RNA sequence: GGGAACGACUCGAGUAGAGUCGAAAAUGUGGAUUGUGACACUGCAGGUGUGGGGAAUACCUUCAUCUGUGAAGAAGUCGCAAAUGACCUCACUACCGCCCUACGCAGGCCUAUUAACGCUACGGAUACAGAAGGUAUACUUCGGUAUACCUUCUGUAAAAGAAACAACAACAACAAC
Reactivity to DMS in 0.01 (KOAc 150mM, MgCl2 10mM, bicine 150mM(pH8.5), 24C), signal-to-noise 2, nucleotides 027 to 126: u000g010u010g030g010a160u000u000g020u000g010a040c010a110c030u000g010c000a030g000g040u010g010u000g020g000g050g020a260a060u000a170c020c010u010u000c000a000u000c000u000g020u000g000a160a100g000a160a080g020u000c000g000c000a020a030a080u000g000a140c040c000u010c020a080c070u000a080c070c070g040c100c000c010u000a040c050g000c070a080g000g010c010c100u000a060u000u020a090a090c100g000c090u010a060c050g010g000a300u000
Reactivity to 2A3 in 0.01 (KOAc 150mM, MgCl2 10mM, bicine 150mM(pH8.5), 24C), signal-to-noise 2, nucleotides 027 to 126: u090g000u020g040g040a050u000u040g000u010g010a000c000a000c030u050g000c020a000g000g010u000g000u010g010g010g010g020a080a160u180a300c000c000u000u000c000a010u000c010u000g020u030g010a030a030g040a040a010g010u000c010g000c000a000a010a110u110g110a070c020c000u000c020a040c010u040a030c000c020g020c000c000c000u020a020c010g020c060a040g000g090c000c000u070a090u150u120a130a010c030g020c020u050a020c030g010g010a020u020
Notes
Structure probing data (DMS and 2A3) for a 177-nucleotide construct. The DMS profile rests on 1,182 reads. Values are in units of 0.01, from 0 to 300, in steps of 10. Values cover nucleotides 27 to 126. For 2A3 the reverse transcriptase was SuperScript II with manganese.